[RMDB]
RNA sequence: GGGAACGACUCGAGUAGAGUCGAAAAGAAGAGAAUAAGCGCGGAUAUUUCUGUCGGUAGAGCGGCAGGACCGACACCUGCGAGUACAGGGAUCAAGACCCUGUUCGCGCAAAGAUUGAAGUAGAAGCAUAUUACCCACUUUCGAGUGGGUAAUAUGAAAAGAAACAACAACAACAAC
Reactivity to DMS in 0.01 (KOAc 150mM, MgCl2 10mM, bicine 150mM(pH8.5), 24C), signal-to-noise 5, nucleotides 027 to 126: g000a110a080g000a120g010a140a040u040a050a110g010c110g010c030g000g000a110u000a080u040u010u010c030u010g020u000c000g010g000u020a100g010a150g020c010g000g010c030a060g000g020a020c050c020g000a030c050a100c090c070u010g020c000g020a050g020u010a040c010a000g000g000g000a100u020c220a110a130g000a150c000c010c000u000g020u010u000c010g020c010g000c010a030a070a070g000a150u010u010g000a040a240g010u010a030g000a130a100g000
Reactivity to 2A3 in 0.01 (KOAc 150mM, MgCl2 10mM, bicine 150mM(pH8.5), 24C), signal-to-noise 9, nucleotides 027 to 126: g090a030a010g120a000g060a060a090u190a210a070g090c070g000c020g090g030a050u040a120u170u090u030c010u020g020u010c010g020g030u130a050g020a030g190c020g000g010c010a010g010g020a020c010c000g000a010c010a040c010c020u020g000c000g010a010g010u010a010c010a000g020g000g010a030u200c140a080a050g090a150c000c000c000u000g000u000u000c010g000c000g000c010a020a070a000g090a120u090u170g040a080a010g040u130a030g040a090a010g040